RNA sequence: GGGAACGACUCGAGUAGAGUCGAAAAUGGGGCUAUUGGACUGACUUUUCUUAUGCUGGGAUGUGCCUUAGAGGAUUAUGGGUAAGUUAUCAUUUCAAAAAGAACUAUUCCUCUUUCUGUGUCUUUGUCACUAUUAGUAUGGGUGUUAGAGAGUUCGAAGUAGUCUAUUCUUCGGAAUAGACUACUUAAAAGAAACAACAACAACAAC
Reactivity to DMS in 0.01 (KOAc 150mM, MgCl2 10mM, bicine 150mM(pH8.5), 24C), signal-to-noise 3, nucleotides 027 to 156: u000g000g020g050g030c050u000a060u000u010g010g000a120c050u010g020a070c030u000u000u000u010c030u010u000a070u000g000c050u010g020g000g010a100u010g020u000g020c050c060u000u020a070g000a070g030g040a090u000u000a080u000g010g010g000u010a060a120g010u010u000a060u010c060a130u000u010u020c080a080a060a110a070a080g000a060a080c050u000a140u010u000c030c010u000c000u000u000u010c040u030g020u000g020u010c010u010u000u000g010u010c010a040c040u010a100u000u000a070g020u010a060u010g010g000g030u000g020u000u000a100g010a110g010a130g020u000u000c040g000
Reactivity to 2A3 in 0.01 (KOAc 150mM, MgCl2 10mM, bicine 150mM(pH8.5), 24C), signal-to-noise 3, nucleotides 027 to 156: u080g010g000g000g010c050u050a020u100u120g030g020a030c010u010g030a080c030u120u060u090u040c080u150u170a090u100g010c020u060g060g040g010a080u030g040u050g030c000c030u050u030a030g000a010g040g020a020u130u060a070u220g060g030g030u040a110a010g010u030u090a100u160c070a080u050u170u140c080a100a120a040a020a050g040a060a030c020u060a100u070u050c000c020u000c070u000u060u000c030u000g050u000g030u040c000u000u110u080g070u040c040a010c030u080a050u160u020a000g050u020a030u100g020g000g010u040g000u030u030a040g010a000g000a020g070u090u120c020g040

This 207-nucleotide RNA was probed chemically with DMS and 2A3. Reactivities are given for positions 27 through 156. The reactions ran in a buffer of 150 mM KOAc, 10 mM MgCl2 and 150 mM bicine (pH 8.5), at 24 C. For 2A3, 1,021 sequencing reads were counted. DMS adducts were read by reverse transcription with MarathonRT.